[RMDB]
RNA sequence: GGGAACGACUCGAGUAGAGUCGAAAACUAGGCUUUGGUUUCUUCAAGUGAAGCGGUCACCAAUCAGGUGUGGUAGUUACCGUAAAAAAUCCGGAUUGAUUCGAGGCCCCGAGCGCUGACAUGGGCGCUAGGAACAGGCCUUCGGGCCUGUUCCUAGAAAAGAAACAACAACAACAAC
Reactivity to DMS in 0.01 (KOAc 150mM, MgCl2 10mM, bicine 150mM(pH8.5), 24C), signal-to-noise 2, nucleotides 027 to 126: c070u010a040g000g000c010u000u000u020g010g010u000u020u000c000u000u050c070a060a170g000u000g000a110a030g000c110g000g000u000c060a090c050c010a030a130u040c080a060g000g010u000g020u010g010g040u000a100g000u010u010a130c000c010g020u060a000a040a080a120a050a060u000c040c030g000g020a110u000u040g030a040u020u000c070g000a100g000g000c040c000c000c060g000a050g000c000g010c010u000g000a090c180a110u020g000g030g000c020g000
Reactivity to 2A3 in 0.01 (KOAc 150mM, MgCl2 10mM, bicine 150mM(pH8.5), 24C), signal-to-noise 2, nucleotides 027 to 126: c030u060a060g110g000c010u000u070u010g000g020u010u040u030c020u010u040c130a180a100g000u010g110a080a010g070c030g000g020u030c020a000c020c020a000a070u080c100a060g110g000u090g010u040g140g010u060a020g030u030u050a040c000c060g020u100a040a020a130a000a010a030u090c060c010g070g000a100u060u060g080a030u070u060c050g030a090g030g010c010c010c000c010g040a040g010c010g010c010u010g010a050c020a130u080g050g000g000c010g000